[RMDB]
RNA sequence: GGGAACGACUCGAGUAGAGUCGAAAAACACCAAAACUGAAAACGGAAGGCAAUCCUUCCACGACGAUACUUACUUUCCUUCGAUCGUCGUUACUACUGGCAUAGCCACAAAGGAGAACAAACAUGAGCGCGGACACUGACUUCGGUCAGUGUCCAAGUCCCUACGUAACUUCGGUUACGUAGGGACAAAAGAAACAACAACAACAAC
Reactivity to 2A3 in 0.01 (KOAc 150mM, MgCl2 10mM, bicine 150mM(pH8.5), 24C), signal-to-noise 2, nucleotides 027 to 156: a000c030a110c040c040a070a090a040a030c080u150g020a120a140a020a050c070g000g000a010a000g020g030c120a010a260u280c000c010u000u000c000c010a010c000g010a000c000g050a010u110a150c070u090u090a080c020u060u140u090c020c010u080u140c010g010a020u000c000g010u000c010g000u020u020a010c050u000a060c030u000g010g020c030a120u090a110g100c030c000a080c090a090a180a010g100g000a060g010a050a090c070a090a140a010c070a140u200g110a100g080c070g020c050g020g000a000c010a000c000u000g000a000c000u020u070c120g000g000u000c000a000g000u000g000u020c000c000a000a000
An RNA of 207 nucleotides, treated with 2A3 and read out base by base. Reactivities are given for positions 27 through 156. The reactions ran in a buffer of 150 mM KOAc, 10 mM MgCl2 and 150 mM bicine (pH 8.5), at 24 C. 2A3 adducts were read by reverse transcription with SuperScript II with manganese.